Conditions: 150 mM KOAc, 10 mM MgCl2 and 150 mM bicine (pH 8.5), 24 C. Chemical mapping of a 177-nucleotide RNA with DMS and 2A3. The 2A3 profile rests on 1,188 reads. For DMS, 2,218 sequencing reads were counted.

RNA sequence: GGGAACGACUCGAGUAGAGUCGAAAAAUGCUGUUUGGGCUGGUUGGGGACACGCAUCUGAAAACCCUAAAUUGCCUGAGAUGCUUUCUGCCAGUAGUAAGAAAAUCGUUUUUAUUGGUCCUCCAGACGGUAAUUUAGGUUUCGACCUAAAUUACCGAAAAGAAACAACAACAACAAC
Reactivity to DMS in 0.01 (KOAc 150mM, MgCl2 10mM, bicine 150mM(pH8.5), 24C), signal-to-noise 3, nucleotides 027 to 126: a040u000g000c020u000g010u000u000u000g020g000g000c040u010g010g010u000u010g020g000g010g000a080c160a090c140g000c090a070u020c100u000g000a060a090a100a120c010c000c020u000a030a060a090u000u000g010c020c020u000g000a100g000a080u010g000c040u000u000u010c050u000g010c010c020a040g010u000a060g010u000a060a080g000a070a060a090a110u000c110g000u000u000u000u000u010a030u020u010g000g000u000c050c030u010c080c050a070g010a220
Reactivity to 2A3 in 0.01 (KOAc 150mM, MgCl2 10mM, bicine 150mM(pH8.5), 24C), signal-to-noise 1, nucleotides 027 to 126: a000u050g000c020u010g050u150u040u040g030g020g000c040u040g010g010u020u090g040g000g000g020a000c010a010c050g080c010a080u070c050u040g080a040a080a070a080c000c000c010u060a140a150a070u070u070g010c020c000u000g000a010g010a030u060g000c000u000u050u000c020u020g010c030c010a040g020u050a000g010u040a150a000g040a110a100a010a130u130c070g050u000u060u040u030u020a090u060u040g000g000u050c010c010u020c020c000a000g030a050